[RMDB]
RNA sequence: GGGAACGACUCGAGUAGAGUCGAAAAGAUAUGGAAAUCUCCGAGGACAUCGAUCUAAGCUCGGAAACGAGCUUAGGGAGUCCGAGGAGAGUUUCCUAAGUCAAACACGCUCCUUCGGGAGCGUGAACAUUAGUGUUCUCUUCGGAGAACACUAAUGAAAAGAAACAACAACAACAAC
Reactivity to DMS in 0.01 (KOAc 150mM, MgCl2 10mM, bicine 150mM(pH8.5), 24C), signal-to-noise 6, nucleotides 027 to 126: g000a080u010a300u000g000g000a010a040a080u000c010u000c000c000g010a300g000g010a010c010a180u010c160g010a090u010c000u010a000a010g010c000u010c010g000g000a070a090a160c000g010a010g010c000u000u000a010g000g000g000a030g020u000c000c000g000a300g000g000a010g000a020g010u000u000u000c000c000u000a070a190g010u000c040a110a170a300c000a020c000g020c000u010c000c000u000u020c230g020g000g000a000g010c000g010u000g000a060a180
Reactivity to 2A3 in 0.01 (KOAc 150mM, MgCl2 10mM, bicine 150mM(pH8.5), 24C), signal-to-noise 1, nucleotides 027 to 126: g010a040u090a050u150g000g000a000a040a020u010c000u000c000c010g000a060g000g000a030c050a250u300c220g070a020u020c050u010a000a000g000c000u000c020g000g030a010a000a020c010g020a000g000c000u000u000a000g000g010g000a010g000u000c010c000g000a000g000g000a000g000a010g000u000u020u020c010c010u000a120a020g070u000c050a040a150a060c000a000c010g010c000u040c000c000u030u130c300g130g020g000a030g040c000g000u000g000a000a000